[RMDB]
RNA sequence: GGGAACGACUCGAGUAGAGUCGAAAACGCGCCGAGCUUGCCAAGCAGCAGCGUGAGGAGUCGAGGGCGCGCAAGGAGGAACUGCAGCGGAAGCAGGCUGAGGAGAGGAGAAAGAAGAAGGAGGAGCUAAUAGCGUAUGCUUCGGCAUACGCUAUUAAAAAGAAACAACAACAACAAC
Reactivity to DMS in 0.01 (KOAc 150mM, MgCl2 10mM, bicine 150mM(pH8.5), 24C), signal-to-noise 5, nucleotides 027 to 126: c070g020c060g010c000c010g020a130g000c030u000u020g010c040c070a160a190g050c050a100g010c100a090g000c060g000u010g020a150g010g000a090g010u010c040g000a130g030g000g020c010g010c050g000c110a070a050g000g000a080g020g020a060a100c070u010g000c030a070g010c090g010g020a090a100g010c030a060g000g000c060u010g010a100g000g000a060g010a070g010g010a050g000a040a090a060g010a050a040g000a080a050g000g000a050g010g000a070g010c110
Reactivity to 2A3 in 0.01 (KOAc 150mM, MgCl2 10mM, bicine 150mM(pH8.5), 24C), signal-to-noise 4, nucleotides 027 to 126: c050g020c000g020c000c010g020a050g010c030u070u100g050c020c020a070a010g000c040a020g000c000a010g010c030g050u060g020a070g010g030a030g020u100c040g040a100g010g060g000c030g000c010g000c000a030a050g080g020a040g010g040a060a030c020u050g030c020a040g020c040g050g020a070a010g030c040a030g030g080c050u060g030a040g010g030a010g010a030g030g020a030g040a030a070a010g060a040a010g010a010a030g040g010a020g000g010a000g020c030